Conditions: 150 mM KOAc, 10 mM MgCl2 and 150 mM bicine (pH 8.5), 24 C. Chemical mapping of a 177-nucleotide RNA with 2A3 and DMS.
RNA sequence: GGGAACGACUCGAGUAGAGUCGAAAACGCGAACCGUGAGUGGAACCCUCGAUCCUUUAUUGGGGGGUACACUCGAGGAGUGGAAGGCGGGGAGAGGGGCGCCCAGGGUCAACCUACGGGAAUCCCUGUACAUAACUCUCUUCGGAGAGUUAUGUACAAAAGAAACAACAACAACAAC
Reactivity to 2A3 in 0.01 (KOAc 150mM, MgCl2 10mM, bicine 150mM(pH8.5), 24C), signal-to-noise 1, nucleotides 027 to 126: c040g010c010g040a010a050c040c050g010u100g020a000g010u040g030g020a120a020c010c010c000u000c010g050a090u160c010c140u270u300u300a020u110u160g000g010g000g050g020g000u070a000c000a000c000u010c000g020a050g030g010a050g000u080g040g100a130a100g060g080c110g000g000g000g000a160g030a000g050g000g020g000c020g020c070c020c030a020g060g010g020u090c040a150a180c020c010u050a070c110g010g010g010a020a000u030c020c020c000u040
Reactivity to DMS in 0.01 (KOAc 150mM, MgCl2 10mM, bicine 150mM(pH8.5), 24C), signal-to-noise 1, nucleotides 027 to 126: c160g010c040g010a140a090c020c090g000u010g000a000g050u020g000g110a130a230c000c000c000u020c050g020a050u030c300c130u020u020u000a020u000u000g000g000g010g000g030g010u010a110c000a010c010u000c000g010a090g000g000a100g010u000g000g000a100a090g050g030c210g000g000g000g000a150g000a030g000g020g010g040c300g000c090c050c090a040g000g010g020u020c210a060a090c060c000u000a040c160g000g010g020a150a070u020c000c000c000u010
The DMS profile rests on 621 reads. 2A3 adducts were read by reverse transcription with SuperScript II with manganese.